[RMDB]
RNA sequence: GGGAACGACUCGAGUAGAGUCGAAAAGAUGACGUGCGAGUUACACCAUGCAAUUUUUGAUGUUGUUCUGCACGUGGGGCACGAUGCGUAUCCUUAUGAACCGUUAAAAGAAUGUAAUGGUGUCGAGCAUUGAUGGGCCGUUCGCGGCCCAUCAAUGAAAAGAAACAACAACAACAAC
Reactivity to DMS in 0.01 (KOAc 150mM, MgCl2 10mM, bicine 150mM(pH8.5), 24C), signal-to-noise 1, nucleotides 027 to 126: g000a100u030g020a040c070g000u010g000c030g000a200g040u000u010a000c020a030c010c010a010u010g000c050a010a030u000u000u000u000u000g020a020u000g010u010u040g000u000u000c000u000g010c150a040c140g050u010g040g030g020g020c140a060c060g000a080u000g010c060g020u000a070u020c050c010u000u020a090u000g000a040a010c010c010g040u000u000a000a020a000a070g010a040a100u000g020u000a090a000u000g010g000u000g020u000c050g010a200g020
Reactivity to 2A3 in 0.01 (KOAc 150mM, MgCl2 10mM, bicine 150mM(pH8.5), 24C), signal-to-noise 1, nucleotides 027 to 126: g110a010u120g050a000c000g050u030g020c030g010a040g050u090u090a010c010a000c000c000a010u000g000c050a040a070u000u000u000u040u170g020a010u000g070u300u060g000u010u020c010u100g010c000a000c040g000u010g000g000g000g080c050a030c050g070a070u170g020c010g000u070a110u060c000c020u080u000a170u150g020a000a010c010c010g000u000u000a050a050a000a020g210a140a190u110g010u090a050a130u020g040g060u000g020u010c010g050a030g000